[RMDB]
RNA sequence: GGGAACGACUCGAGUAGAGUCGAAAACGAGCCGGCAUCACCGAUGGCACGCAGCGCGAACGCGGUGCCCAGGACGGCGAACGCGACCGCGCGGGUGAAUCGGGCACUCGGCGACAGCUGCGCGGCCAAAAGUUAGCGAGUUCGCUCGCUAACUUUUAAAAGAAACAACAACAACAAC
Reactivity to DMS in 0.01 (KOAc 150mM, MgCl2 10mM, bicine 150mM(pH8.5), 24C), signal-to-noise 1, nucleotides 027 to 126: c050g020a100g010c020c010g000g000c110a080u000c030a070c040c090g000a130u000g010g000c020a090c000g020c050a060g000c020g000c070g030a090a150c000g050c070g020g000u010g010c040c000c010a070g020g000a300c120g000g010c020g000a070a200c010g010c000g000a130c100c200g010c020g010c000g000g000g030u000g000a080a130u000c080g000g010g000c030a050c010u000c080g010g000c000g030a180c050a100g000c030u000g000c040g000c070g000g020c000c070
Conditions: 150 mM KOAc, 10 mM MgCl2 and 150 mM bicine (pH 8.5), 24 C. Chemical mapping of a 177-nucleotide RNA with DMS. It was measured as part of the RMDB library OK2TRN. The DMS profile rests on 977 reads. DMS adducts were read by reverse transcription with MarathonRT.